[RMDB]
RNA sequence: GGGAACGACUCGAGUAGAGUCGAAAAGAGACUGCAUUAGGCUUUUAUAACAAAGUCACACUUGCAAGGAAACCUAAACUGAGUAAAAUAGGAUCUAGUGGGUCCAAGAAUAUAGCCUAUGAAGACAGACACAUGAGUAGUUCGCUACUCAUGUGUCAAAAGAAACAACAACAACAAC
Reactivity to DMS in 0.01 (KOAc 150mM, MgCl2 10mM, bicine 150mM(pH8.5), 24C), signal-to-noise 1, nucleotides 027 to 126: g000a200g030a060c020u000g000c060a000u020u020a060g010g040c030u000u000u010u000a000u010a060a130c090a000a140a160g010u030c060a080c060a120c090u060u010g040c120a120a060g000g020a090a040a090c040c000u000a010a060a150c100u010g000a120g000u000a020a050a150a190u000a000g000g000a170u000c020u000a110g010u000g000g000g000u000c010c030a050a260g000a100a000u020a030u000a070g010c070c010u000a060u000g000a140a020g000a040c130a060
Reactivity to 2A3 in 0.01 (KOAc 150mM, MgCl2 10mM, bicine 150mM(pH8.5), 24C), signal-to-noise 1, nucleotides 027 to 126: g050a000g000a040c000u050g020c010a090u000u090a090g010g020c010u200u000u170u070a190u080a080a060c040a090a050a000g000u000c010a020c020a000c080u020u130g000c010a020a000g080g000a030a170a040c000c000u030a110a040a040c120u190g170a060g160u160a000a230a030a070u030a010g000g020a010u000c000u020a030g030u090g060g050g000u030c030c030a010a010g060a110a000u120a010u130a040g080c020c000u040a020u050g050a000a060g120a030c020a050
Background:
Source: RMDB library OK2TST, as collected in RNAgym. An RNA of 177 nucleotides, treated with DMS and 2A3 and read out base by base. For DMS the reverse transcriptase was MarathonRT. Values cover nucleotides 27 to 126. For DMS, 514 sequencing reads were counted.